[RMDB]
RNA sequence: GGGAACGACUCGAGUAGAGUCGAAAACAACUGUUAUCUUGCCACUGCAUUGUUAACACUCCAACAAAUAGAGUUGAACUUUAAUCCACCUGCUCUACAAAGGGCUGGUGAAGCUGCUAACUUUUGUACACUAAAAGGUUCGCCUUUUAGAAAAGAAACAACAACAACAAC
Reactivity to DMS in 0.01 (KOAc 150mM, MgCl2 10mM, bicine 150mM(pH8.5), 24C), signal-to-noise 7, nucleotides 027 to 129: c050a070a050c170u040g030u030u020a060u000c060u040u090g030c040c110a130c210u050g000c070a070u010u000g000u020u030a010a010c110a060c050u040c000c080a120a130c160a080a120a090u050a100g010a010g030u000u050g000a040a070c040u000u000u000a090a090u000c140c010a010c030c010u040g020c000u030c010u040a000c300a060a110a030g010g000g010c020u030g000g000u020g020a040a000g030c080u000g020c020u030a030a020c040u010u010u000u010g030u050a090c130a200
Reactivity to 2A3 in 0.01 (KOAc 150mM, MgCl2 10mM, bicine 150mM(pH8.5), 24C), signal-to-noise 9, nucleotides 027 to 129: c010a010a020c040u020g010u060u040a060u070c040u060u130g050c020c070a140c100u120g010c030a040u030u050g030u040u030a020a010c010a010c040u020c040c040a050a040c040a050a170a080u230a040g040a000g030u020u090g040a050a030c000u070u080u160a050a040u070c020c000a000c010c000u020g010c000u010c000u020a110c110a060a200a050g000g000g000c000u020g000g000u000g000a000a020g020c050u060g000c010u020a040a040c000u040u040u020u070g070u040a030c060a010
Source: RMDB library 15KLIB, as collected in RNAgym. An RNA of 170 nucleotides, treated with DMS and 2A3 and read out base by base. For DMS the reverse transcriptase was MarathonRT. The 2A3 profile rests on 25,646 reads. DMS (dimethyl sulfate) methylates the pairing face of unpaired adenines and cytosines. The reactions ran in a buffer of 150 mM KOAc, 10 mM MgCl2 and 150 mM bicine (pH 8.5), at 24 C.